[RMDB]
RNA sequence: GGGAACGACUCGAGUAGAGUCGAAAAAUACUGAUUUGUCAUGAAAUGAUGUACAUGCUGCAUCUCCUCUAGUGGAUUGCAAUUUUGUUGUAUUCCUCAAAUCACCUAACCAUGGUGCUAAGCAAAUAAUGGGAAUAGAGUGCUUACACAUGCCUGGCUAUCUGGUGAUCUUCGGAUCACCAGAUAGAAAAGAAACAACAACAACAAC
Reactivity to 2A3 in 0.01 (KOAc 150mM, MgCl2 10mM, bicine 150mM(pH8.5), 24C), signal-to-noise 9, nucleotides 027 to 156: a000u160a040c050u020g030a050u050u050u070g120u150c120a100u120g060a060a090a090u120g020a030u020g030u050a030c050a130u180g050c050u020g000c060a020u010c030u040c050c030u070c060u090a070g080u050g080g010a040u020u040g010c010a020a050u030u070u080u280g090u020u000g000u020a080u020u030c010c000u050c030a020a040a030u060c030a030c030c040u070a100a040c030c010a030u120g050g000u020g020c050u020a010a010g000c010a060a020a090u150a100a080u220g060g050g040a040a030u090a100g100a030g050u040g000c000u010u020a010c020a000c000a040u070g010c010c040u030g040g010
Reactivity to DMS in 0.01 (KOAc 150mM, MgCl2 10mM, bicine 150mM(pH8.5), 24C), signal-to-noise 2, nucleotides 027 to 156: a070u020a100c080u000g010a050u000u000u000g040u000c060a150u010g050a090a060a120u000g020a050u000g020u000a080c050a090u000g040c130u000g010c020a070u000c050u000c040c000u000c040u010a140g030u000g010g010a050u000u010g010c040a050a070u030u000u000u010g040u000u010g010u000a120u000u000c010c010u020c060a090a050a160u020c070a120c020c040u000a060a090c090c050a110u000g030g000u000g070c090u000a010a050g010c040a040a070a060u000a080a090u000g010g000g060a070a100u010a110g010a130g020u000g020c000u000u010a060c030a050c020a030u010g000c020c040u000g000g000